RNA sequence: GGGAACGACUCGAGUAGAGUCGAAAAGAUAUGGAAGCUGUGUGUGGCUAGCAUAUUGUCAGAGCGAUAAUCGGAAACGAUUAAAGCUCUUGGAUUUAUAUGCAAACCACACACAGCUUCCUAAGUCGUUCUAAAACACGUUCGCGUGUUUUAGAACAAAAGAAACAACAACAACAAC
Reactivity to DMS in 0.01 (KOAc 150mM, MgCl2 10mM, bicine 150mM(pH8.5), 24C), signal-to-noise 1, nucleotides 027 to 126: g010a110u020a300u000g000g010a000a000g050c020u030g070u000g010u010g010u010g030g040c000u000a300g010c020a010u000a000u010u000g000u000c000a000g010a000g000c000g000a300u000a000a010u000c000g000g020a110a060a300c010g030a010u000u010a000a040a300g000c030u000c010u000u000g010g000a010u010u000u000a030u060a010u030g000c020a060a140a270c010c000a010c000a010c010a010c030a010g010c010u000u010c000c000u020a010a030g020u020c090

Chemical mapping of a 177-nucleotide RNA with DMS.
DMS adducts were read by reverse transcription with MarathonRT.